[RMDB]
RNA sequence: GGGAACGACUCGAGUAGAGUCGAAAAGAUAUGGAUGUUGGUAAGUCCGAGGAUCAACAUGUAUGUAGAUAUAUCGGAAACGAUAUAUCCGAAGUACAUGUUGGGAGGAUAUCCAACAUCCUAAGUCCGUAAGGCUGUAGUUCGCUACAGCCUUACGAAAAGAAACAACAACAACAAC
Reactivity to 2A3 in 0.01 (KOAc 150mM, MgCl2 10mM, bicine 150mM(pH8.5), 24C), signal-to-noise 3, nucleotides 027 to 126: g010a010u070a030u170g000g010a020u000g010u020u030g050g060u160a300a300g070u010c050c000g040a300g010g030a010u020c000a000a010c040a000u000g020u000a060u300g110u200a020g010a000u000a000u000a010u000c010g000g050a040a050a040c000g010a010u010a000u000a000u000c040c040g140a300a070g030u000a000c010a010u000g000u010u000g000g010g000a010g000g000a000u030a020u080c000c000a000a020c000a000u000c000c000u000a010a000g010u000c030
Reactivity to DMS in 0.01 (KOAc 150mM, MgCl2 10mM, bicine 150mM(pH8.5), 24C), signal-to-noise 2, nucleotides 027 to 126: g020a050u000a240u000g000g000a000u010g030u000u000g000g010u010a100a250g000u000c000c000g010a120g040g000a070u000c010a000a000c000a000u000g000u000a010u020g010u020a170g000a040u000a010u000a010u010c000g020g000a120a060a130c000g010a010u000a000u000a020u000c040c030g010a140a220g000u000a010c000a010u000g000u000u000g000g000g010a040g010g020a010u000a300u000c000c010a010a010c000a000u010c000c000u000a010a060g000u000c030